This 207-nucleotide RNA was probed chemically with 2A3 and DMS.
RNA sequence: GGGAACGACUCGAGUAGAGUCGAAAAUCCGAACAAUAAUUGGCGAAGAAUCUUACGCCAUGGCUGCUUAAUUACGAACUAAGUUUGUAAUAAUGAGCGUUGAGUGGAGCUGUUAAGAACAGCACCCGGCCACAUCUCACACGGCUUCUGUUCUGCGGAUGGUAUAUCCGUUCGCGGAUAUACCAUCAAAAGAAACAACAACAACAAC
Reactivity to 2A3 in 0.01 (KOAc 150mM, MgCl2 10mM, bicine 150mM(pH8.5), 24C), signal-to-noise 2, nucleotides 027 to 156: u050c040c000g010a080a020c040a040a010u300a100a140u100u050g010g000c040g010a090a030g090a260a180u160c060u150u120a070c000g000c000c030a010u020g030g000c060u050g000c000u070u050a070a030u030u000a050c000g020a030a000c040u160a130a230g040u030u000u010g020u010a000a010u020a060a060u100g020a020g030c010g030u080u100g020a060g010u180g010g040a040g040c010u000g020u040u070a190a040g130a190a020c010a000g000c010a060c000c000c020g030g000c010c020a100c000a120u100c090u030c030a060c020a020c080g060g010c000u110u070c020u110g050u020u030c030u030g030c070g110
Reactivity to DMS in 0.01 (KOAc 150mM, MgCl2 10mM, bicine 150mM(pH8.5), 24C), signal-to-noise 1, nucleotides 027 to 156: u000c000c030g100a120a210c070a100a170u010a060a100u000u000g080g020c010g010a080a080g100a190a060u000c090u000u000a080c000g040c000c010a050u000g020g000c000u000g090c010u000u000a080a150u010u000a030c020g000a050a010c000u020a120a180g040u000u000u000g000u010a030a040u010a080a110u000g010a040g040c000g000u000u020g000a070g000u000g000g000a100g040c020u000g020u000u000a120a190g010a180a100c020a020g030c080a050c010c010c000g000g080c030c020a100c080a080u020c020u000c030a110c050a100c080g010g000c020u010u000c070u000g000u000u000c020u000g010c120g050